[RMDB]
RNA sequence: GGGAACGACUCGAGUAGAGUCGAAAAUCGAUGGCGUUCGCGCCAUCGAAGAGGCGUACCGCGUAGCACGCGGAUAGGAGUGAAGAUAUCCAAGGCCAUGGAGGAGGCGUGCUUUCGAGCACGCCAAGAUGGUAUCUGGAUUCGUCCAGAUACCAUCAAAAGAAACAACAACAACAAC
Reactivity to DMS in 0.01 (KOAc 150mM, MgCl2 10mM, bicine 150mM(pH8.5), 24C), signal-to-noise 5, nucleotides 027 to 126: u000c000g010a020u000g000g010c000g040u000u020c190g020c020g020c000c000a000u000c010g010a010a060g010a140g010g010c030g010u000a100c010c020g000c030g010u000a120g010c070a300c020g020c020g000g000a110u000a040g010g000a060g010u010g000a120a070g000a100u000a090u000c010c030a060a110g020g000c030c020a120u010g000g010a100g000g020a210g010g000c000g010u000g000c010u000u010u010c160g000a030g010c000a000c000g000c000c000a010a020
Reactivity to 2A3 in 0.01 (KOAc 150mM, MgCl2 10mM, bicine 150mM(pH8.5), 24C), signal-to-noise 5, nucleotides 027 to 126: u030c000g000a000u010g000g000c020g030u060u050c210g020c010g000c090c010a010u010c000g000a000a010g010a040g010g020c050g030u050a050c010c010g000c000g010u040a060g120c140a020c090g020c020g030g010a020u100a050g080g010a070g050u130g130a100a080g050a170u090a050u110c000c030a020a050g080g000c020c020a020u060g060g020a060g050g080a040g010g000c000g000u000g010c010u060u030u080c170g050a000g010c010a000c000g000c000c000a000a010
An RNA of 177 nucleotides, treated with DMS and 2A3 and read out base by base. The DMS profile rests on 6,507 reads. Values cover nucleotides 27 to 126. The RNA was probed in 150 mM KOAc, 10 mM MgCl2 and 150 mM bicine (pH 8.5) at 24 C. The 2A3 profile rests on 8,892 reads. DMS (dimethyl sulfate) methylates the pairing face of unpaired adenines and cytosines. For DMS the reverse transcriptase was MarathonRT.